[RMDB]
Chemical mapping of a 177-nucleotide RNA with 2A3 and DMS.
RNA sequence: GGGAACGACUCGAGUAGAGUCGAAAAGGUGGCGUCAAUCUCUUAAACCUAUCCUUAGUUCGGAUUGAGGGCUGGAACUCGCCCUCAUGAAGAUGGAAUCCGUAGUAAUCGCAUUUCAAAACAGUGCAGAUUCCAGGGAAUUCGUUCCCUGGAAUCUAAAAGAAACAACAACAACAAC
Reactivity to 2A3 in 0.01 (KOAc 150mM, MgCl2 10mM, bicine 150mM(pH8.5), 24C), signal-to-noise 3, nucleotides 027 to 126: g080g020u070g010g010c030g020u090c020a060a110u030c080u000c000u110u190a050a060a050c030c000u020a040u070c000c020u070u080a060g060u100u060c000g010g000a020u000u000g000a010g010g000g000c020u030g010g170a150a110c030u070c110g000c000c000c020u010c010a020u010g010a000a000g020a010u010g030g030a060a030u030c040c050g010u070a050g040u020a150a030u040c010g000c010a030u000u060u100c060a090a130a020a050c060a100g040u040g040c000
Reactivity to DMS in 0.01 (KOAc 150mM, MgCl2 10mM, bicine 150mM(pH8.5), 24C), signal-to-noise 2, nucleotides 027 to 126: g000g020u000g000g040c140g030u000c050a030a070u000c020u020c020u000u030a050a110a080c050c020u020a060u000c010c030u000u030a030g050u020u020c010g000g000a150u000u000g000a000g000g010g000c030u000g010g040a210a120c150u000c170g010c000c030c000u000c000a000u010g010a300a100g000a010u000g000g000a070a060u000c090c040g080u000a100g000u030a060a020u000c110g010c050a040u020u020u000c030a060a110a150a150c250a010g000u010g000c130